[RMDB]
RNA sequence: GGGAACGACUCGAGUAGAGUCGAAAAAACAACCUGCCGCUGGCAAAUCCGGUAAACCCAACAAGCAUCACCUCCAACCCGCAGAUACUCCUGGCCAACCGGGCGCACCGCACCUUGGUGAGGUCGCAGGUUGGACUUCUUUCGAGAAGUCCAACCUAAAAGAAACAACAACAACAAC
Reactivity to 2A3 in 0.01 (KOAc 150mM, MgCl2 10mM, bicine 150mM(pH8.5), 24C), signal-to-noise 4, nucleotides 027 to 126: a010a010c030a010a040c010c010u030g010c020c020g050c060u070g040g000c050a080a060a070u060c050c010g040g010u070a070a070a100c010c010c010a010a020c050a090a000g020c010a040u040c010a020c010c010u030c030c010a050a070c030c010c010g000c010a010g020a080u060a090c020u010c020c020u040g020g000c000c010a010a020c010c000g030g020g000c010g010c000a100c030c060g000c020a030c010c020u040u260g040g010u030g020a080g020g010u010c020g000c050
Reactivity to DMS in 0.01 (KOAc 150mM, MgCl2 10mM, bicine 150mM(pH8.5), 24C), signal-to-noise 6, nucleotides 027 to 126: a070a070c050a080a090c030c020u000g010c030c020g010c070u000g000g020c050a060a070a090u000c040c020g000g000u000a050a080a080c060c010c020a070a060c110a080a090g010c030a060u010c050a070c050c010u000c030c030a090a090c060c020c030g000c100a060g000a110u010a080c070u000c030c030u000g010g000c010c040a130a070c040c030g000g000g020c040g010c060a050c080c070g010c030a030c010c030u000u000g030g010u000g000a050g010g010u000c040g020c110